[RMDB]
RNA sequence: GGGAACGACUCGAGUAGAGUCGAAAAAGAAGUUGAAGAAUAUUGUUCAGAAGAAGAAGAUGUUGAGCACAGUGUCGGUGACAAAAGAACAAUAGUCACAAAGAAUCACAGUUAUGAGCCAUUUGUAACUAGUAUCAUCAUUCGUGAUGAUACUAGUAAAAGAAACAACAACAACAAC
Reactivity to 2A3 in 0.01 (KOAc 150mM, MgCl2 10mM, bicine 150mM(pH8.5), 24C), signal-to-noise 6, nucleotides 027 to 126: a010g070a040a000g050u090u110g050a080a040g030a110a030u080a060u120u090g020u050u040c050a050g030a140a010g030a040a010g030a030a010g030a160u100g050u110u070g060a040g080c070a020c020a160g030u040g030u120c070g050g010u020g010a010c020a050a120a000a030g060a060a010c030a060a040u050a060g020u020c000a000c000a040a150a020g070a040a020u090c020a020c010a060g030u050u090a100u160g040a010g050c040c030a060u090u070u090g070u020a030
Reactivity to DMS in 0.01 (KOAc 150mM, MgCl2 10mM, bicine 150mM(pH8.5), 24C), signal-to-noise 9, nucleotides 027 to 126: a070g000a080a100g010u010u010g010a100a080g020a080a080u010a050u010u000g020u000u000c040a100g010a120a090g010a090a080g010a100a090g010a060u000g010u000u000g010a110g020c100a080c050a060g000u000g010u000c060g010g010u000g000a050c040a040a050a100a100g010a050a040c090a030a040u000a080g000u010c030a060c080a070a060a100g000a070a060u000c040a020c070a060g010u000u000a070u000g010a080g010c060c060a080u000u000u000g010u010a080
This 177-nucleotide RNA was probed chemically with 2A3 and DMS.
For 2A3, 7,650 sequencing reads were counted.
The DMS profile rests on 15,334 reads.
DMS (dimethyl sulfate) methylates the pairing face of unpaired adenines and cytosines.
As a SHAPE reagent, 2A3 marks flexible, mostly unpaired nucleotides at the ribose 2'-OH.
The reactions ran in a buffer of 150 mM KOAc, 10 mM MgCl2 and 150 mM bicine (pH 8.5), at 24 C.